Source: RMDB library OK1LIB, as collected in RNAgym.
An RNA of 177 nucleotides, treated with DMS and 2A3 and read out base by base.
2A3 adducts were read by reverse transcription with SuperScript II with manganese.
Conditions: 150 mM KOAc, 10 mM MgCl2 and 150 mM bicine (pH 8.5), 24 C.
For 2A3, 13,123 sequencing reads were counted.
RNA sequence: GGGAACGACUCGAGUAGAGUCGAAAAAGCGAACUGCGCACGGAGAAGCCUUGAGGGAAUGCCGUAGGACCCGGGUUCGAUUCCCGGCAGCUCCACCGAAGGGCCAGGUCAGUGGCCCAUUUGCAGAGUCGUCAGACUGGUUCGCCAGUCUGACGGCAAAAGAAACAACAACAACAAC
Reactivity to DMS in 0.01 (KOAc 150mM, MgCl2 10mM, bicine 150mM(pH8.5), 24C), signal-to-noise 5, nucleotides 027 to 126: a070g000c070g020a040a060c030u010g030c060g010c140a100c110g030g010a070g000a070a090g020c040c040u010u010g010a260g010g000g000a060a070u010g010c040c030g020u040a090g000g000a120c100c070c040g010g000g010u020u020c120g010a220u000u020c000c000c010g000g010c120a050g000c030u000c030c020a110c070c060g000a110a090g000g000g020c010c010a030g000g000u010c150a040g040u000g000g010c020c000c000a040u010u010u020g000c050a050g000a190
Reactivity to 2A3 in 0.01 (KOAc 150mM, MgCl2 10mM, bicine 150mM(pH8.5), 24C), signal-to-noise 8, nucleotides 027 to 126: a010g080c040g020a050a050c020u060g010c050g000c020a040c070g040g020a050g020a090a040g040c020c030u110u150g060a150g030g020g020a040a050u110g050c020c010g030u050a090g040g080a050c010c020c010g010g010g000u080u080c060g040a030u030u040c000c000c000g010g000c020a020g000c010u000c010c010a030c010c010g040a100a130g010g000g000c000c000a030g000g070u140c070a040g060u030g030g000c000c000c000a030u030u020u070g020c020a000g030a020